[RMDB]
RNA sequence: GGGAACGACUCGAGUAGAGUCGAAAACGAGAGGCUAAUGCUGUGGAGAAACGCGAUAUCGGCUUUGGUAGUCAGACGCGAAAUUACGUCUUUCAGCCUUAUACAUUGGUCAAAGAUGUGCGUACUAACCUCGGGAUUUAUUCGUAAAUCCCGAGGUAAAAGAAACAACAACAACAAC
Reactivity to 2A3 in 0.01 (KOAc 150mM, MgCl2 10mM, bicine 150mM(pH8.5), 24C), signal-to-noise 2, nucleotides 027 to 126: c030g000a040g010a040g080g020c030u060a080a070u070g020c000u040g030u100g050g060a110g090a060a120a000c020g010c000g040a040u070a040u180c030g010g040c030u200u120u110g090g010u020a010g020u000c020a030g020a080c010g030c010g070a110a020a000u170u100a020c010g030u000c000u000u020u010c040a050g000c000c000u080u060a070u020a090c100a050u010u200g050g060u090c080a050a020a060g100a070u070g030u030g070c020g010u020a080c080u090a070
Reactivity to DMS in 0.01 (KOAc 150mM, MgCl2 10mM, bicine 150mM(pH8.5), 24C), signal-to-noise 3, nucleotides 027 to 126: c060g010a210g010a070g010g000c020u000a050a040u020g020c040u000g010u010g000g000a120g000a070a110a130c060g000c030g020a060u010a040u000c070g030g000c060u000u000u000g020g040u000a030g010u010c040a070g040a030c050g030c030g000a050a090a100u010u010a080c070g010u010c020u000u000u000c070a100g010c010c020u000u000a070u010a060c140a050u000u000g000g030u000c210a040a090a130g000a060u010g000u000g010c090g030u000a080c110u010a050